[RMDB]
RNA sequence: GGGAACGACUCGAGUAGAGUCGAAAAGAUACGACUAGUACUUUUUGCCCAUCCAUUUUUGACUCGUGAAUUUUUUAACAUGUGAAUUUUGACAAUCUUCUCCGUGGAAGCACCUCCUCUUCAUCGCGAUAUAAUAAGGCUUCGGCCUUAUUAUAUCAAAAGAAACAACAACAACAAC
Reactivity to DMS in 0.01 (KOAc 150mM, MgCl2 10mM, bicine 150mM(pH8.5), 24C), signal-to-noise 2, nucleotides 027 to 126: g000a200u000a040c020g010a140c160u000a160g010u000a020c020u000u010u000u000u010g010c010c010c020a180u010c050c050a070u010u000u000u010u010g000a110c040u010c060g010u000g010a060a020u000u000u000u040u010u020a100a160c050a050u000g000u010g000a080a060u010u000u010u010g010a110c070a070a120u010c050u000u010c010u000c040c050g020u010g010g000a050a110g030c080a050c030c010u000c000c000u000c070u000u010c050a070u010c100g000c220
Reactivity to 2A3 in 0.01 (KOAc 150mM, MgCl2 10mM, bicine 150mM(pH8.5), 24C), signal-to-noise 2, nucleotides 027 to 126: g000a060u040a000c000g070a130c220u160a020g040u030a060c030u010u060u020u080u140g060c060c000c030a020u000c010c000a060u000u070u090u080u070g050a040c000u010c080g030u010g080a140a180u040u040u000u060u120u300a150a100c040a080u090g020u040g100a110a090u190u160u090u140g070a000c010a060a080u040c010u040u010c030u030c020c010g000u060g010g050a050a000g000c000a030c040c010u040c030c000u030c020u050u080c030a110u050c030g020c060
Record summary
The record gives the reactivity of an RNA of 177 nucleotides to DMS and 2A3. 2A3 is a SHAPE reagent: it acylates the 2'-hydroxyl of flexible nucleotides of all four kinds. 2A3 adducts were read by reverse transcription with SuperScript II with manganese. DMS adducts were read by reverse transcription with MarathonRT. The 2A3 profile rests on 986 reads. Reactivities are given for positions 27 through 126.